[RMDB]
This 177-nucleotide RNA was probed chemically with DMS and 2A3. Source: RMDB library M2PK90, as collected in RNAgym. 2A3 adducts were read by reverse transcription with SuperScript II with manganese. For DMS, 5,631 sequencing reads were counted. The reactions ran in a buffer of 150 mM KOAc, 10 mM MgCl2 and 150 mM bicine (pH 8.5), at 24 C.
RNA sequence: GGGAACGACUCGAGUAGAGUCGAAAAGUAAAGGCGAGUGAGAAGAUCACAGAAUGCCAAAAGCACGCUUAGAAACGGACAUCUCUGAGCAAAAGUGCACGCUAUAAGCGAAAGAUGCCGAAAAAAACGAUACCUUUAGAUUCGUCUAAAGGUAUCGAAAAGAAACAACAACAACAAC
Reactivity to DMS in 0.01 (KOAc 150mM, MgCl2 10mM, bicine 150mM(pH8.5), 24C), signal-to-noise 5, nucleotides 027 to 126: g020u000a060a110a160g010g020c020g010a110g010u000g010a020g000a130a100g010a120u000c010a020c010a100g010a100a100u010g010c010c010a060a100a110a150g010c010a050c020g000c010u000u010a040g010a050a100a080c040g000g000a070c060a050u000c030u000c030u010g010a080g020c050a070a040a070a150g020u000g030c090a110c030g010c020u000a090u010a090a100g010c000g010a100a060a090g000a030u000g020c010c030g020a000a010a050a030a060a080a120
Reactivity to 2A3 in 0.01 (KOAc 150mM, MgCl2 10mM, bicine 150mM(pH8.5), 24C), signal-to-noise 5, nucleotides 027 to 126: g050u050a030a110a040g010g000c020g030a040g010u030g020a040g020a190a080g060a080u010c000a010c010a030g140a100a050u180g000c000c000a010a050a000a030g000c010a000c040g010c010u010u010a020g020a050a110a030c050g010g050a030c010a030u030c020u000c030u050g020a010g010c000a020a080a070a080g030u030g000c030a020c050g000c000u110a090u050a300a070g010c030g040a090a080a000g030a020u050g000c010c000g070a120a050a010a000a000a000a010